[RMDB]
RNA sequence: GGGAACGACUCGAGUAGAGUCGAAAAGCGUGUUGGAGAGACGCGGCUUGAAAAUAGCCGCACGUACGGUUGACUCACUGUUCUACGGUGCAUACCGAGGAGCGGUCAAUACGCUGUACGUUGACGACAUGUCUGGUGGAUUCGUCCACCAGACAUGAAAAGAAACAACAACAACAAC
Reactivity to 2A3 in 0.01 (KOAc 150mM, MgCl2 10mM, bicine 150mM(pH8.5), 24C), signal-to-noise 2, nucleotides 027 to 126: g080c050g000u050g040u080u040g070g020a150g000a020g020a070c060g000c000g000g030c000u000u010g090a070a070a010a020u160a020g010c000c000g000c020a000c010g020u010a000c000g000g050u020u130g040a020c010u010c050a010c000u030g040u020u040c040u050a070c010g000g000u060g100c120a180u230a200c010c020g060a120g000g010a010g000c000g010g000u020c020a000a030u060a110c030g010c000u000g000u000a000c000g010u030u110g090a060c040g020a030
Reactivity to DMS in 0.01 (KOAc 150mM, MgCl2 10mM, bicine 150mM(pH8.5), 24C), signal-to-noise 2, nucleotides 027 to 126: g000c070g010u010g020u010u000g030g020a150g010a120g010a180c150g010c000g000g000c010u000u000g000a120a070a170a190u000a020g010c000c000g020c020a010c010g010u000a020c030g000g010u000u020g010a150c200u000c300a030c010u000g020u000u000c030u020a300c020g030g010u000g020c300a080u000a020c000c000g030a300g020g000a010g010c020g000g000u000c070a050a050u010a060c230g010c000u000g000u010a020c020g000u000u000g000a090c120g000a160